[RMDB]
The record gives the reactivity of an RNA of 177 nucleotides to 2A3 and DMS. For 2A3 the reverse transcriptase was SuperScript II with manganese. The DMS profile rests on 1,931 reads. Conditions: 150 mM KOAc, 10 mM MgCl2 and 150 mM bicine (pH 8.5), 24 C.

RNA sequence: GGGAACGACUCGAGUAGAGUCGAAAAUGCUGUCUCUCAACCAACAACAGGCAGAAGAUGCCGAGCGCGUGCGUGAGGUAUUGGAGACGCAAAUUCGUCUGUUGUCGGAUCAAAUAGUGGAGUGUGAUCGUAUUUACGUCUUCGGACGUAAAUACGAAAAAGAAACAACAACAACAAC
Reactivity to 2A3 in 0.01 (KOAc 150mM, MgCl2 10mM, bicine 150mM(pH8.5), 24C), signal-to-noise 2, nucleotides 027 to 126: u120g030c050u060g060u130c010u020c010u000c020a010a070c030c000a010a030c010a010a010c000a020g010g000c050a070g040a060a020g060a010u020g020c020c020g010a040g000c030g000c020g060u140g010c010g000u030g050a050g020g020u040a080u040u130g090g060a140g030a100c060g000c070a050a060a000u100u050c030g030u000c030u020g010u000u010g040u010c020g040g000a160u140c160a030a120a130u170a100g080u090g110g000a060g010u070g060u060g030a020
Reactivity to DMS in 0.01 (KOAc 150mM, MgCl2 10mM, bicine 150mM(pH8.5), 24C), signal-to-noise 3, nucleotides 027 to 126: u010g010c030u000g040u010c020u000c000u000c120a210a140c000c000a040a050c050a020a020c010a030g000g020c010a140g010a070a060g010a110u000g020c000c000g010a300g000c040g050c040g030u000g000c010g020u000g000a240g000g030u000a040u000u000g020g020a160g000a110c160g000c150a030a020a120u000u010c040g010u000c000u000g030u010u000g000u000c030g000g000a120u000c140a110a110a120u000a060g040u000g020g000a050g000u000g010u000g000a170

For 2A3, 1,742 sequencing reads were counted. Source: RMDB library OK2TST, as collected in RNAgym.